[RMDB]
RNA sequence: GGGAACGACUCGAGUAGAGUCGAAAAUGGAGCCCCUGUUUAUGGAUCUAUUCAAGAUGAAAUCGUAGCAGCGUAUUCAUUGUUUAGGAUACAAGAUCUUUGUUUAGAUGAAGUAUUAAACAUCUUGGGGAAAUAUGGAAGAAAGUUCGAUCCUAAAAGGAAAGAGUGUAUUCGUACACUCUUUCCUAAAAGAAACAACAACAACAAC
Reactivity to DMS in 0.01 (KOAc 150mM, MgCl2 10mM, bicine 150mM(pH8.5), 24C), signal-to-noise 1, nucleotides 027 to 156: u000g010g000a140g020c060c040c020c060u000g020u000u000u010a060u020g020g000a050u000c000u000a150u000u000c020a030a050g040a020u000g010a050a090a150u000c050g030u000a090g000c060a070g040c120g030u000a090u010u010c010a130u010u010g020u000u000u000a120g080g010a040u000a060c030a090a220g010a050u000c030u000u000u000g020u010u000u000a060g040a060u010g000a140a140g000u020a120u010u000a030a050a060c050a060u000c080u010u010g030g010g030g000a030a060a170u010a050u010g000g060a100a110g010a050a090a140g000u000u000c060g010a300u010c000c000u010a050a080a180
Reactivity to 2A3 in 0.01 (KOAc 150mM, MgCl2 10mM, bicine 150mM(pH8.5), 24C), signal-to-noise 2, nucleotides 027 to 156: u140g040g040a040g040c000c000c000c010u050g050u010u060u040a060u050g060g000a030u000c010u010a030u040u070c010a020a030g050a060u020g050a000a110a140u060c060g030u130a050g010c160a010g020c050g080u040a050u010u080c020a090u050u130g100u070u290u250a050g010g010a010u030a050c020a010a100g050a060u000c020u030u110u210g040u070u120u130a000g000a010u070g040a060a010g080u100a070u100u130a040a000a040c000a030u070c060u060u060g000g000g020g060a100a000a050u160a070u090g090g010a030a040g030a150a150a020g020u010u050c010g020a010u000c010c010u010a000a070a150
The record gives the reactivity of an RNA of 207 nucleotides to DMS and 2A3. The reactions ran in a buffer of 150 mM KOAc, 10 mM MgCl2 and 150 mM bicine (pH 8.5), at 24 C. High DMS reactivity at an A or C suggests that its Watson-Crick edge is free. Reactivities are given for positions 27 through 156. For 2A3, 610 sequencing reads were counted.